[RMDB]
RNA sequence: GGGAACGACUCGAGUAGAGUCGAAAAAUUUGGCUUUGAGGUUCACUUAUACUCUUUUCGACAUCAAAGCUUGCUUAAAAAUGUUUUCAAGUUGAUUUUUAGGGACUUUUAUACUUGAGAGCAAUUUGGUGGUUUGCUAGUAUUUCCAAACCAUAUUCACGAUAUCUUACUUCGGUAAGAUAUCGUGAAAAGAAACAACAACAACAAC
Reactivity to 2A3 in 0.01 (KOAc 150mM, MgCl2 10mM, bicine 150mM(pH8.5), 24C), signal-to-noise 1, nucleotides 027 to 156: a050u160u060u190g010g000c000u010u000u000g010a010g000g040u130u060c000a010c070u200u200a070u140a220c000u110c170u230u210u220u300c110g050a040c040a020u010c000a000a000a000g010c000u000u120g000c020u120u080a110a060a000a000a000u070g000u010u060u000u000c000a000a020g010u000u000g050a050u060u030u090u300u300a060g030g040g020a000c000u150u300u030u160a000u020a010c000u010u010g000a020g060a040g000c000a040a170u110u090u200g020g000u020g000g000u000u000u070g000c020u050a060g020u020a190u110u140u050c040c000a010a000a000c000c010a010u010a130u010u020
Chemical mapping of a 207-nucleotide RNA with 2A3. Reactivities are rounded to 0.1 and cut off at 0 and 3. The RNA was probed in 150 mM KOAc, 10 mM MgCl2 and 150 mM bicine (pH 8.5) at 24 C. The data come from the RNA Mapping Database (RMDB), library ARCHII. The 2A3 profile rests on 362 reads.